[RMDB]
RNA sequence: GGGAACGACUCGAGUAGAGUCGAAAAACUACUUACCUUAAUAGUUAGAAAUAAGAUUCUUAGGUUAGUUUUGAUAGUUUAGCCCUGUUAUAUGGCGUUUUAUCAAAGCGAAGUUUAAGUAAUAUAACUAUGAUCGUAGAGGUUAACGACGGAAUACCAAGACUUAUCUGUUCGCAGAUAAGUCUUGAAAAGAAACAACAACAACAAC
Reactivity to DMS in 0.01 (KOAc 150mM, MgCl2 10mM, bicine 150mM(pH8.5), 24C), signal-to-noise 2, nucleotides 027 to 156: a130c030u000a060c030u000u000a020c010c010u000u000a070a020u010a020g010u000u000a030g000a160a100a270u000a150a180g010a300u010u000c020u000u000a000g020g010u000u000a230g010u000u000u000u000g010a010u000a010g000u000u010u000a130g020c030c010c130u000g020u000u000a140u000a070u010g000g020c000g010u000u000u000u000a050u000c000a010a020a070g080c000g000a070a200g010u000u000u000a000a030g000u000a060a120u030a110u000a010a020c000u000a010u000g000a060u000c030g000u000a060g010a090g020g000u010u010a050a090c060g000a130c070g000g000a080a110u000a090c100
Reactivity to 2A3 in 0.01 (KOAc 150mM, MgCl2 10mM, bicine 150mM(pH8.5), 24C), signal-to-noise 2, nucleotides 027 to 156: a000c030u080a010c000u020u070a040c000c000u090u070a050a040u010a100g010u010u040a020g050a080a190a100u180a140a060g030a110u190u000c010u020u030a010g000g060u100u000a000g030u010u050u020u010g000a000u010a030g030u000u060u120a020g020c020c000c000u020g110u230u120a160u030a050u110g000g020c020g000u010u070u050u070a010u020c000a030a000a000g000c000g030a040a000g000u010u080u090a040a000g030u020a050a030u070a010u010a060a000c000u000a020u160g020a070u090c040g030u030a030g030a050g230g000u090u050a060a040c050g040a030c040g050g070a050a070u070a170c000

Description: This 207-nucleotide RNA was probed chemically with DMS and 2A3. The RNA was probed in 150 mM KOAc, 10 mM MgCl2 and 150 mM bicine (pH 8.5) at 24 C. 2A3 adducts were read by reverse transcription with SuperScript II with manganese. Reactivities are given for positions 27 through 156. DMS adducts were read by reverse transcription with MarathonRT.